[RMDB]
About this RNA
The data come from the RNA Mapping Database (RMDB), library OK3TST. An RNA of 207 nucleotides, treated with DMS and 2A3 and read out base by base. High DMS reactivity at an A or C suggests that its Watson-Crick edge is free. DMS adducts were read by reverse transcription with MarathonRT.

RNA sequence: GGGAACGACUCGAGUAGAGUCGAAAAGAAACUUGCUUCUGUCUAUCGUAAAUUGGCGAAGGUUGAAGGUCCUAUGUUAACACCUCUUAUUAGUUGUGGCAUUUUUGGUGUACCACUUGAGCAAUCAUUGAAAGCUUUGAUUAAGGCCUUUAAAUCACCUGCUCCUUUAAUUCGUUAAAGGAGCAGGAAAAGAAACAACAACAACAAC
Reactivity to DMS in 0.01 (KOAc 150mM, MgCl2 10mM, bicine 150mM(pH8.5), 24C), signal-to-noise 1, nucleotides 027 to 156: g000a120a130a100c060u000u000g010c000u000u010c040u000g030u000c040u000a140u000c070g000u000a060a120a160u000u000g000g060c020g020a100a110g050g010u000u000g040a090a080g040g030u000c040c010u010a080u000g020u000u020a040a090c020a070c030c010u000c050u000u010a090u000u000a090g030u000u000g040u000g030g000c020a140u040u000u000u010u020g020g010u000g020u000a050c030c030a070c040u020u010g030a080g040c020a030a080u000c010a160u000u000g010a060a050a070g000c040u000u020u000g010a120u000u010a040a040g030g020c020c040u010u000u000a050a040a040u000c050a130
Reactivity to 2A3 in 0.01 (KOAc 150mM, MgCl2 10mM, bicine 150mM(pH8.5), 24C), signal-to-noise 2, nucleotides 027 to 156: g040a050a050a020c040u060u080g060c020u040u050c070u110g100u000c040u080a160u060c050g040u130a040a130a090u090u130g020g020c050g060a060a080g040g040u080u100g030a040a020g010g010u000c030c020u070a040u140g040u030u080a090a020c030a030c050c030u060c070u200u090a100u110u200a050g060u060u060g000u030g070g000c020a040u010u000u000u040u300g050g000u020g040u050a040c030c000a040c040u010u030g010a010g000c030a150a020u060c020a090u110u140g010a140a180a040g020c020u060u020u030g040a050u090u100a060a040g030g000c000c010u000u210u080a070a130a010u120c040a030

The RNA was probed in 150 mM KOAc, 10 mM MgCl2 and 150 mM bicine (pH 8.5) at 24 C.
2A3 is a SHAPE reagent: it acylates the 2'-hydroxyl of flexible nucleotides of all four kinds.
For 2A3 the reverse transcriptase was SuperScript II with manganese.
For DMS, 2,436 sequencing reads were counted.